[RMDB]
RNA sequence: GGGAACGACUCGAGUAGAGUCGAAAAUGCAGUGACUUGGCGACCUCAAAGGCCACCGGUACCCCGCCGCGCGGCAAGCCAAGGACGACGACGGCCUUGCCGGAUAGCUGCGCCAGGCGUUGCGCCACUAUAGGAGCCUUUUCGAAGGCUCCUAUAGAAAAGAAACAACAACAACAAC
Reactivity to 2A3 in 0.01 (KOAc 150mM, MgCl2 10mM, bicine 150mM(pH8.5), 24C), signal-to-noise 2, nucleotides 027 to 126: u190g010c010a000g030u020g080a300c020u000u010g000g030c010g030a130c000c110u190c090a130a090a060g050g030c020c020a020c010c000g050g000u110a110c020c060c000c000g000c020c000g070c000g010c010g010g000c030a050a010g010c000c010a050a020g060g010a000c040g000a010c040g020a030c000g050g030c030c030u000u080g030c010c010g070g050a120u110a070g030c010u040g010c000g030c010c000a000g010g000c000g040u040u030g020c040g000c000c010a060
Reactivity to DMS in 0.01 (KOAc 150mM, MgCl2 10mM, bicine 150mM(pH8.5), 24C), signal-to-noise 3, nucleotides 027 to 126: u020g020c010a040g020u000g010a100c020u010u010g020g000c020g000a110c300c090u000c140a060a100a180g000g000c000c020a070c040c010g000g010u000a120c110c120c010c040g000c000c010g010c080g020c020g010g010c040a030a060g000c100c090a060a100g000g000a100c050g010a140c130g010a060c070g000g010c070c070u000u000g010c020c010g000g010a100u000a080g000c040u000g010c020g010c010c050a030g000g000c030g020u000u010g010c010g000c070c030a170
Structure probing data (2A3 and DMS) for a 177-nucleotide construct. For DMS, 2,478 sequencing reads were counted. For 2A3 the reverse transcriptase was SuperScript II with manganese.